An RNA of 177 nucleotides, treated with 2A3 and DMS and read out base by base. In probing experiments dimethyl sulfate is read out at A N1 and C N3, which are open when not base-paired. The reactions ran in a buffer of 150 mM KOAc, 10 mM MgCl2 and 150 mM bicine (pH 8.5), at 24 C. It was measured as part of the RMDB library RFMREP. The 2A3 profile rests on 8,599 reads.
RNA sequence: GGGAACGACUCGAGUAGAGUCGAAAACUCGGGAUCGGCGAUCUUCCUAUCAGGUCGUUGGCGGGGUAAUGGCCCACCAAGCCGAAGACGGGUAGCGGGUGUGAGAGCACGACCCGCGACAUCGGGAACUCUAACUAAACUUCGGUUUAGUUAGAGUAAAAGAAACAACAACAACAAC
Reactivity to 2A3 in 0.01 (KOAc 150mM, MgCl2 10mM, bicine 150mM(pH8.5), 24C), signal-to-noise 5, nucleotides 027 to 126: c010u010c000g010g040g080a160u050c030g020g000c020g060a070u030c010u060u070c030c010u110a160u220c070a030g010g030u020c040g040u050u030g020g000c040g000g000g000g000u020a040a100u090g110g030c020c000c000a010c010c010a020a020g020c010c020g020a040a030g080a040c040g050g000g000u020a020g010c030g010g030g000u020g010u020g040a300g010a030g190c020a020c040g120a050c000c000c010g000c010g010a010c020a090u090c030g020g010g060a050
Reactivity to DMS in 0.01 (KOAc 150mM, MgCl2 10mM, bicine 150mM(pH8.5), 24C), signal-to-noise 6, nucleotides 027 to 126: c010u000c010g010g020g000a100u000c030g020g010c030g010a090u000c040u000u000c030c050u000a090u000c130a080g000g020u010c220g000u000u000g010g010c020g010g010g010g000u000a120a080u010g010g000c010c010c010a040c020c010a030a300g010c020c000g010a050a120g010a110c030g000g000g010u000a080g010c020g000g000g010u000g010u000g000a190g000a170g010c050a040c020g000a050c010c000c000g010c010g010a040c130a050u010c040g010g010g000a180